[RMDB]
The record gives the reactivity of an RNA of 177 nucleotides to DMS.
For DMS the reverse transcriptase was MarathonRT.
Conditions: 150 mM KOAc, 10 mM MgCl2 and 150 mM bicine (pH 8.5), 24 C.
It was measured as part of the RMDB library OK2TST.
RNA sequence: GGGAACGACUCGAGUAGAGUCGAAAAAGAAACAGUUCUUGGAAGUGUUGAUCCAAAUCAAUGUUAUUGAUGACUCUUAAUUUACUCAGUGGAACUGUGCAGGCUAUUUUGUAAGGCUCCAAGCUACGGAAGGGAGUUAUUUCGAUAACUCCCUUCCAAAAGAAACAACAACAACAAC
Reactivity to DMS in 0.01 (KOAc 150mM, MgCl2 10mM, bicine 150mM(pH8.5), 24C), signal-to-noise 2, nucleotides 027 to 126: a060g010a220a130a040c020a030g000u000u000c030u000u000g010g020a100a050g000u010g000u000u010g000a090u000c080c120a050a070a030u000c020a000a030u000g000u000u010a070u000u000g000a030u010g000a070c080u000c110u000u000a080a060u000u010u010a050c050u000c040a140g030u010g010g010a020a030c020u000g000u000g010c160a020g000g000c050u010a050u010u020u010u000g010u010a090a100g000g010c010u030c040c050a060a080g010c180u000a070c290